[RMDB]
RNA sequence: GGGAACGACUCGAGUAGAGUCGAAAACGGGGUACGAGGGAUUAUAAAGGGUCUCUGGUUAAACUGUCCCGUACCCAUAGACUACUUUUGAAAUAAACCCAGAGACCCUUAUAUCAGAAGUGGUCAAGGUACUCGUAGAUUUCGAUCUGUGAGUACCAAAAGAAACAACAACAACAAC
Reactivity to 2A3 in 0.01 (KOAc 150mM, MgCl2 10mM, bicine 150mM(pH8.5), 24C), signal-to-noise 9, nucleotides 027 to 126: c030g010g000g000g000u020a010c020g030a300g040g060g020a030u080u120a100u170a160a160a040g010g000g000u000c000u000c000u020g030g030u050u130a090a120a080c060u060g040u040c000c000c000g000u000a010c000c000c010a010u090a020g010a000c000u000a000c000u020u010u010u020g030a020a060a030u220a090a130a070c020c010c000a000g000a000g000a010c000c000c000u000u050a060u010a000u010c000a000g000a010a000g000u010g000g000u010c020a030a030
Reactivity to DMS in 0.01 (KOAc 150mM, MgCl2 10mM, bicine 150mM(pH8.5), 24C), signal-to-noise 5, nucleotides 027 to 126: c080g000g000g000g000u010a010c040g010a120g010g010g000a050u020u020a100u020a070a130a040g000g000g000u000c000u000c000u000g000g010u020u060a060a090a080c220u020g010u000c000c000c000g010u000a020c010c000c000a060u030a090g000a020c010u000a010c010u000u010u000u010g000a030a090a070u030a040a060a140c200c010c010a000g000a020g010a010c000c000c010u000u000a010u020a090u010c010a010g000a020a010g010u000g000g000u010c000a130a190